[RMDB]
RNA sequence: GGGAACGACUCGAGUAGAGUCGAAAAUCUGGUGGCGUCUGGCACUGGUGCAAGACAGAGCUGUGCUUCCCCGAGAGUGUGCUAAGCAUUCACUUUGGCUGCUUAGUUCUAGUCUGGGAGCAGACAGAGUUAUAAGUUGAUUCGUCAACUUAUAACUAAAAGAAACAACAACAACAAC
Reactivity to 2A3 in 0.01 (KOAc 150mM, MgCl2 10mM, bicine 150mM(pH8.5), 24C), signal-to-noise 9, nucleotides 027 to 126: u040c030u040g050g020u050g050g040c040g060u050c070u060g040g010c030a020c070u080g080g030u090g040c040a060a020g030a030c040a020g090a020g050c020u030g010u060g050c000u160u190c000c000c000c020g030a030g000a010g110u130g010u020g020c000u010a010a000g000c000a010u040u040c020a040c240u160u160u280g030g000c010u000g000c000u000u000a000g000u010u010c020u050a060g070u000c000u000g020g000g010a020g020c010a000g030a030c010a010g070
Reactivity to DMS in 0.01 (KOAc 150mM, MgCl2 10mM, bicine 150mM(pH8.5), 24C), signal-to-noise 9, nucleotides 027 to 126: u010c030u000g010g020u000g010g010c100g010u000c030u000g010g010c030a060c060u010g010g010u010g010c070a060a060g010a070c060a080g000a170g010c020u010g010u010g010c040u010u010c020c010c010c110g010a060g000a110g010u010g010u000g000c010u000a010a020g000c000a010u000u000c020a140c300u010u020u020g010g000c090u000g000c000u000u000a010g010u000u000c010u010a100g010u000c010u000g000g000g010a070g010c010a050g000a080c070a100g000
Source: RMDB libraries RFM100 and RFMREP, as collected in RNAgym. An RNA of 177 nucleotides, treated with 2A3 and DMS and read out base by base. For DMS the reverse transcriptase was MarathonRT.